[RMDB]
Chemical mapping of a 177-nucleotide RNA with DMS and 2A3.
RNA sequence: GGGAACGACUCGAGUAGAGUCGAAAAGAUAUGGACUGAGGAUGACUUUUGACGUCACCCAUUCGGAAACGAAUGAUGUGACGAUAAGUCACUCAGUCCUAAGUCAAAACGCAUCUUCGGAUGCGAAGUAACCUUAUAAGUUCGCUUAUAAGGUUACAAAAGAAACAACAACAACAAC
Reactivity to DMS in 0.01 (KOAc 150mM, MgCl2 10mM, bicine 150mM(pH8.5), 24C), signal-to-noise 9, nucleotides 027 to 126: g010a050u000a300u010g000g000a010c010u000g000a010g000g010a200u000g010a020c000u000u010u010u000g010a230c090g010u000c000a000c010c300c000a000u000u000c000g010g000a090a080a190c000g010a020a010u000g000a080u000g020u000g010a020c000g010a080u000a010a010g000u000c000a060c000u000c000a010g000u000c000c000u000a010a070g000u010c030a090a070a140a210c030g000c000a010u000c000u000u010c250g020g000a010u000g010c000g010a020a080
Reactivity to 2A3 in 0.01 (KOAc 150mM, MgCl2 10mM, bicine 150mM(pH8.5), 24C), signal-to-noise 9, nucleotides 027 to 126: g020a000u040a030u120g010g000a000c010u010g000a010g200g160a300u160g010a070c020u100u150u190u300g280a180c100g000u000c000a000c000c010c000a000u000u000c010g010g030a040a060a050c010g010a010a010u030g050a110u160g010u010g000a000c000g050a070u060a170a010g000u000c000a010c010u000c000a000g000u000c000c000u000a000a000g000u000c010a000a010a050a090c010g000c000a000u000c010u070u050c230g190g000a000u000g000c000g000a050a000

The DMS profile rests on 26,027 reads.
Conditions: 150 mM KOAc, 10 mM MgCl2 and 150 mM bicine (pH 8.5), 24 C.
It was measured as part of the RMDB library TTRDES.